[RMDB]
This 207-nucleotide RNA was probed chemically with 2A3 and DMS. The RNA was probed in 150 mM KOAc, 10 mM MgCl2 and 150 mM bicine (pH 8.5) at 24 C. For DMS, 2,003 sequencing reads were counted. 2A3 adducts were read by reverse transcription with SuperScript II with manganese. It was measured as part of the RMDB library M2RFPK. DMS adducts were read by reverse transcription with MarathonRT. For 2A3, 2,055 sequencing reads were counted.
RNA sequence: GGGAACGACUCGAGUAGAGUCGAAAAGACUGAUGUAGAGUUUGGUUGGAGCGACAAGUAUUUAGCUUGAGAUAGCUAAAUCACCUCGGUAUGAUUAGGGUGAGACCUAGGAACCGUAGGGGUAUUCAAUGCUGUAUUGCGUUCGCGCAAUACAGAAUCGUCAGACUAUGUUCGCAUAGUCUGACGAAAAAGAAACAACAACAACAAC
Reactivity to 2A3 in 0.01 (KOAc 150mM, MgCl2 10mM, bicine 150mM(pH8.5), 24C), signal-to-noise 3, nucleotides 027 to 156: g040a000c050u060g030a010u090g050u060a020g010a020g070u030u050u070g060g000u020u010g010g000a030g010c060g060a040c030a090a020g040u100a040u010u020u000a000g000c010u000u010g000a010g000a070u110a030g010c000u010a000a000a020u020c010a010c000c000u020c010g010g010u300a210u130g020a040u040u030a010g010g030g020u040g120a090g040a060c010c010u000a020g010g020a010a000c010c000g000u030a030g020g010g000g000u020a100u030u160c080a100a100u150g020c000u010g020u000a000u000u000g010c010g000u000u040c170g000c010g000c070a000a000u000a000c000a000g000a000a080
Reactivity to DMS in 0.01 (KOAc 150mM, MgCl2 10mM, bicine 150mM(pH8.5), 24C), signal-to-noise 1, nucleotides 027 to 156: g020a050c060u010g000a120u020g000u000a020g000a110g040u000u010u000g010g000u010u010g030g020a120g020c080g000a060c040a090a080g050u000a050u000u000u000a000g000c000u010u000g020a210g010a180u000a020g050c000u000a020a000a050u000c020a020c020c010u000c000g050g000u010a070u010g020a120u020u000a080g060g000g050u010g030a270g030a160c010c040u000a020g040g010a130a060c040c020g010u000a050g010g010g000g010u010a060u000u000c060a090a140u000g000c000u010g000u000a000u000u000g010c000g050u000u000c300g030c050g020c010a030a020u000a000c000a010g030a020a040